[RMDB]
RNA sequence: GGGAACGACUCGAGUAGAGUCGAAAAUAUGUGUGUAUGUGUGUAUAUAUGUAUAUGUGUGCAUAUGUGUAUACGUGUAUGCAUACAUGUAUAUGUGUAUGCAUGUAUAUGUGUAUGUGUACAUGUAAUGCGUUUUAUGCUUCGGCAUAAAACGCAUAAAAGAAACAACAACAACAAC
Reactivity to 2A3 in 0.01 (KOAc 150mM, MgCl2 10mM, bicine 150mM(pH8.5), 24C), signal-to-noise 1, nucleotides 027 to 126: u300a020u130g120u090g030u020g000u010a000u110g040u000g000u040g020u070a020u000a000u000a020u050g050u050a030u000a010u050g070u030g010u020g000c000a000u010a000u000g000u000g000u010a040u020a120c040g030u050g000u030a020u150g060c090a010u020a020c000a000u010g040u000a000u010a000u000g000u000g000u010a050u070g050c000a040u000g000u000a000u000a000u000g010u000g000u000a020u000g090u010g000u010a000c000a040u020g000u080a020
The record gives the reactivity of an RNA of 177 nucleotides to 2A3. High 2A3 reactivity points to a flexible backbone, as in loops and unpaired stretches. The data come from the RNA Mapping Database (RMDB), library OK1LIB. Values cover nucleotides 27 to 126. Conditions: 150 mM KOAc, 10 mM MgCl2 and 150 mM bicine (pH 8.5), 24 C.